[RMDB]
RNA sequence: GGGAACGACUCGAGUAGAGUCGAAAACAACUAUACGAGAUGUGGGUGGAGGUGUUUAAUAAGCGUCCAACCCAGUUUGAUUAUCACAUGUACCUGCGGAACAUGAAAGAUGAAGCGAAGCGGGAUGAGUACCGCGUAGGUUCGCCUACGCGGUACUAAAAGAAACAACAACAACAAC
Reactivity to 2A3 in 0.01 (KOAc 150mM, MgCl2 10mM, bicine 150mM(pH8.5), 24C), signal-to-noise 1, nucleotides 027 to 126: c010a030a130c080u130a060u100a130c110g300a160g030a120u010g100u040g040g000g000u000g100g060a060g000g100u120g020u000u020u010a280a300u170a030a000g020c020g190u020c060c010a040a020c000c000c000a030g000u000u000u070g010a040u000u050a030u000c060a000c040a010u260g000u080a110c060c000u180g110c050g000g000a000a010c000a060u120g210a130a300a000g300a070u010g090a000a240g000c140g010a040a000g000c060g000g030g000a090u120g080
Reactivity to DMS in 0.01 (KOAc 150mM, MgCl2 10mM, bicine 150mM(pH8.5), 24C), signal-to-noise 1, nucleotides 027 to 126: c050a100a140c120u000a060u000a090c040g000a130g000a030u050g000u040g000g000g060u000g020g000a100g050g050u030g010u000u010u000a020a060u000a120a120g020c000g000u090c020c020a000a140c000c000c000a080g000u000u000u000g100a100u050u000a040u000c070a000c050a090u000g000u000a140c060c000u000g000c090g000g000a120a050c060a060u000g000a010a000a120g040a010u000g040a040a090g000c150g010a070a280g000c080g010g000g010a170u000g000
Overview:
An RNA of 177 nucleotides, treated with 2A3 and DMS and read out base by base. The 2A3 profile rests on 640 reads. For DMS the reverse transcriptase was MarathonRT. Values cover nucleotides 27 to 126. Reactivities are rounded to 0.1 and cut off at 0 and 3.